[RMDB]
RNA sequence: GGGAACGACUCGAGUAGAGUCGAAAAGAAGGGAAAGGAGAGCCAUGGACAGUCUCCAGAGGUUCCUAAGGCCUCGCUCGCGCCUGCAGGGAGGCAGAAUGUCCCGGUUGUCCAUGAAAGAAGAAGAGACCCAUUAUAUAUUCGUAUAUAAUGGGUCAAAAGAAACAACAACAACAAC
Reactivity to 2A3 in 0.01 (KOAc 150mM, MgCl2 10mM, bicine 150mM(pH8.5), 24C), signal-to-noise 6, nucleotides 027 to 126: g080a020a070g070g020g020a070a110a070g040g020a030g010a010g050c040c030a040u040g000g010a010c020a060g060u010c010u000c020c010a020g060a050g080g060u110u120c000c020u020a050a060g060g000c000c010u030c020g110c040u040c050g080c040g080c030c110u150g000c030a010g030g050g000a000g010g000c010a000g080a060a060u120g040u030c000c000c010g030g000u040u030g020u000c000c000a010u060g060a050a050a080g130a070a010g040a030a000g070a020
Reactivity to DMS in 0.01 (KOAc 150mM, MgCl2 10mM, bicine 150mM(pH8.5), 24C), signal-to-noise 7, nucleotides 027 to 126: g020a140a090g010g000g000a040a070a080g000g000a060g000a080g010c100c020a030u000g000g000a010c040a100g000u010c020u010c030c030a110g000a170g010g010u010u010c020c040u010a100a120g000g000c000c020u000c020g000c020u010c150g020c080g010c170c100u040g010c030a040g000g000g000a030g000g020c010a070g010a100a080u020g010u010c000c000c060g000g000u020u010g010u000c010c010a030u000g000a130a090a100g000a100a100g000a110a090g000a200